[RMDB]
RNA sequence: GGGAACGACUCGAGUAGAGUCGAAAAUACAAGACGAAAGGAAAAGAAAGACAAGUAAAAGGAAUGAUCUGCAACCACCUGGAUAUUGGAGCACAAUUGUGAGAACAACUGGAUCUGUGUCUCUGGAGAUCCCUUUGCUCAGCCAUCAGAUCAAGCAACCCUAGGGAUAGUUCGCUAUCCCUAGGGUAAAAGAAACAACAACAACAAC
Reactivity to 2A3 in 0.01 (KOAc 150mM, MgCl2 10mM, bicine 150mM(pH8.5), 24C), signal-to-noise 4, nucleotides 027 to 156: u120a000c050a010a020g060a020c030g060a090a040a020g020g000a080a080a010a040g050a000a070a000g030a000c050a000a040g050u100a040a090a000a010g020g020a040a050u130g010a040u040c010u080g030c030a060a090c030c020a030c030c020u020g020g010a020u040a100u130u130g040g000a020g030c010a000c020a110a090u110u040g060u050g030a020g040a120a030c040a010a030c050u020g030g010a040u030c000u000g070u030g040u050c010u000c040u130g050g010a030g010a040u040c000c020c020u040u080u100g010c020u030c050a030g000c010c000a030u060c010a020g020a060u100c050a050a000g080c030a020
Reactivity to DMS in 0.01 (KOAc 150mM, MgCl2 10mM, bicine 150mM(pH8.5), 24C), signal-to-noise 2, nucleotides 027 to 156: u020a170c060a090a090g030a090c080g010a040a050a060g020g020a080a090a050a110g020a060a050a130g010a110c020a060a070g020u000a040a040a070a050g010g010a080a050u010g000a040u010c050u020g020c100a060a110c040c050a110c020c020u000g000g000a060u000a070u000u000g010g000a070g020c060a060c060a020a060u000u000g010u000g000a190g000a120a050c030a040a040c060u010g010g050a050u000c020u000g030u010g030u000c050u010c050u000g010g010a070g000a040u000c000c010c010u000u000u020g000c030u010c000a060g030c020c020a110u000c010a050g000a030u010c010a050a040g000c040a160
Structure probing data (2A3 and DMS) for a 207-nucleotide construct.
As a SHAPE reagent, 2A3 marks flexible, mostly unpaired nucleotides at the ribose 2'-OH.
Reactivities are given for positions 27 through 156.
The 2A3 profile rests on 2,269 reads.
2A3 adducts were read by reverse transcription with SuperScript II with manganese.
DMS adducts were read by reverse transcription with MarathonRT.